Conditions: 150 mM KOAc, 10 mM MgCl2 and 150 mM bicine (pH 8.5), 24 C. This 207-nucleotide RNA was probed chemically with DMS and 2A3. For 2A3 the reverse transcriptase was SuperScript II with manganese. Reactivities are given for positions 27 through 156. For 2A3, 5,679 sequencing reads were counted.
RNA sequence: GGGAACGACUCGAGUAGAGUCGAAAAGCCGAUGAAUUGCCGAGAAGCCUGGCUCGAAAUCGUCGACGCAUCGACGACGGUCCUGCCAUGAGACCGUUACGAGGACAUGUCGCCUCGAAUGGCGUCGUAUAACAUGAGUGGUUCGCCACUCAUGUAAGAACCUAUAACAGUUCGCUGUUAUAGGUUCAAAAGAAACAACAACAACAAC
Reactivity to DMS in 0.01 (KOAc 150mM, MgCl2 10mM, bicine 150mM(pH8.5), 24C), signal-to-noise 3, nucleotides 027 to 156: g030c020c010g030a060u000g010a100a100u000u000g010c050c020g020a140g010a130a130g010c070c060u010g030g000c010u000c020g020a010a070a080u000c020g030u000c000g000a040c100g010c090a200u010c020g000a040c000g010a030c000g000g020u000c020c000u010g010c020c280a160u010g020a100g010a040c010c000g030u000u000a100c050g010a070g000g010a090c040a180u010g000u000c060g050c020c000u000c020g010a080a070u000g020g020c010g020u010c000g000u010a100u000a100a050c020a000u000g020a020g040u000g020g020u000u000c300g040c020c010a020c000u010c010a000u000g000u000a030a130
Reactivity to 2A3 in 0.01 (KOAc 150mM, MgCl2 10mM, bicine 150mM(pH8.5), 24C), signal-to-noise 6, nucleotides 027 to 156: g030c020c020g020a030u110g030a060a190u160u110g030c030c030g030a030g030a110a020g020c050c080u100g040g000c030u040c060g060a030a050a060u040c030g030u010c000g020a030c050g010c100a110u080c020g030a030c030g010a000c000g010g000u000c010c010u060g070c040c020a060u100g030a020g010a120c000c000g010u000u000a010c020g000a000g000g010a010c040a130u190g050u170c100g020c010c010u010c010g010a020a030u060g020g030c000g010u050c080g000u080a110u060a240a020c000a000u000g000a000g000u000g030g000u050u070c120g040c070c000a000c000u010c010a000u000g000u000a000a020